[RMDB]
RNA sequence: GGGAACGACUCGAGUAGAGUCGAAAAGGGACUGGCCCGAUGAAGCCCGGCAACCUAACUUUAUUUAAGCGUAAAGUGAAGGUGCUAAUUCCAGCAAAAUGGUGUAUUCCGUUUUGCUAGAUAAGAGAAGCGUGACAUGAGUUCGCUCAUGUCACAACAACAGCUUCGUGUUCGCACGAAGCUGUUGAAAAGAAACAACAACAACAAC
Reactivity to 2A3 in 0.01 (KOAc 150mM, MgCl2 10mM, bicine 150mM(pH8.5), 24C), signal-to-noise 1, nucleotides 027 to 156: g050g020g030a050c080u070g060g060c040c050c030g010a040u130g040a040a030g060c050c040c090g070g000c050a120a190c000c000u030a050a030c000u000u000u080a030u130u250u160a220a090g090c070g030u040a000a000a000g000u040g060a080a100g000g000u000g000c000u000a030a040u120u020c020c010a000g040c020a030a000a000a000u040g040g000u160g040u240a090u040u100c000c030g010u000u030u000u000g000c000u020a010g040a070u140a050a080g020a000g040a110a020g060c010g110u000g000a000c010a000u000g000a000g010u140u110c300g040c050u110c020a000u020g000u000c000a000c000a000a000
Structure probing data (2A3) for a 207-nucleotide construct. The 2A3 profile rests on 532 reads. High 2A3 reactivity points to a flexible backbone, as in loops and unpaired stretches. The RNA was probed in 150 mM KOAc, 10 mM MgCl2 and 150 mM bicine (pH 8.5) at 24 C.